This 207-nucleotide RNA was probed chemically with 2A3. For 2A3, 631 sequencing reads were counted. The reactions ran in a buffer of 150 mM KOAc, 10 mM MgCl2 and 150 mM bicine (pH 8.5), at 24 C.
RNA sequence: GGGAACGACUCGAGUAGAGUCGAAAAGCACCACGAAGCCGAAGCAACAGAGACAAAAUCAAAAUCAAGUUCAACAAAAUAAUACCCCUAAACCACAGCGUCAAUCCAAAAAUCAGCAAAACCAACAAAAAGCACCACUUCGUGCCCAAAAUCAAAAGUGCUACCAUACAUUCGUGUAUGGUAGCACAAAAGAAACAACAACAACAAC
Reactivity to 2A3 in 0.01 (KOAc 150mM, MgCl2 10mM, bicine 150mM(pH8.5), 24C), signal-to-noise 1, nucleotides 027 to 156: g000c020a040c050c000a040c060g020a000a010g050c080c010g020a070a010g070c060a010a000c010a010g090a010g060a050c010a020a130a000a030u110c080a060a100a040a040u030c040a090a040g010u090u080c010a080a010c060a070a160a010a030u160a100a040u120a120c000c090c000c000u030a030a020a030c000c010a000c010a050g030c010g050u020c020a010a060u000c010c040a000a110a110a000a000u010c000a010g040c060a100a060a000a020c050c000a000a010c010a040a190a010a000a000g050c000a010c070c000a010c020u040u060c040g070u040g000c000c000c020a050a080a000a090u080c010a010a070a010a100